[RMDB]
About this RNA
Conditions: 150 mM KOAc, 10 mM MgCl2 and 150 mM bicine (pH 8.5), 24 C. An RNA of 177 nucleotides, treated with 2A3 and DMS and read out base by base. For DMS the reverse transcriptase was MarathonRT. The data come from the RNA Mapping Database (RMDB), library OK2TST. 2A3 adducts were read by reverse transcription with SuperScript II with manganese.
RNA sequence: GGGAACGACUCGAGUAGAGUCGAAAACACGGCGAGUAUCCUCUCCAAGAAGUGCGCCGAGGGUGCGCAGGGCUUGGUCUUCGACGUGAAGACCGGGAGCGGGGCUUUCAUGAAGAGGGAGGAGGACCCUGAUCAGCAAAUUCGUUUGCUGAUCAGGAAAAGAAACAACAACAACAAC
Reactivity to 2A3 in 0.01 (KOAc 150mM, MgCl2 10mM, bicine 150mM(pH8.5), 24C), signal-to-noise 2, nucleotides 027 to 126: c070a010c020g050g000c090g020a040g030u090a120u050c010c010u010c000u000c010c000a040a030g060a060a020g050u020g070c000g000c010c040g050a160g140g070g070u230g010c040g010c040a010g030g080g000c010u040u100g020g000u000c010u070u030c030g250a300c080g160u170g060a010a010g030a020c000c000g000g020g010a050g040c040g020g010g010g000c050u100u180u160c050a050u150g010a050a040g070a100g070g030g030a100g030g000a040g010g060a050c010
Reactivity to DMS in 0.01 (KOAc 150mM, MgCl2 10mM, bicine 150mM(pH8.5), 24C), signal-to-noise 1, nucleotides 027 to 126: c070a090c070g000g010c040g000a100g000u000a120u010c020c010u000c020u000c020c030a100a080g020a070a040g020u000g000c010g020c000c020g000a140g050g010g020u000g020c020g030c030a040g010g010g010c030u000u000g020g000u000c010u000u000c010g010a230c170g000u000g010a020a030g020a030c020c010g000g010g000a090g040c010g000g010g000g010c040u000u020u020c050a060u010g010a060a130g000a090g000g020g010a120g020g030a050g000g010a120c200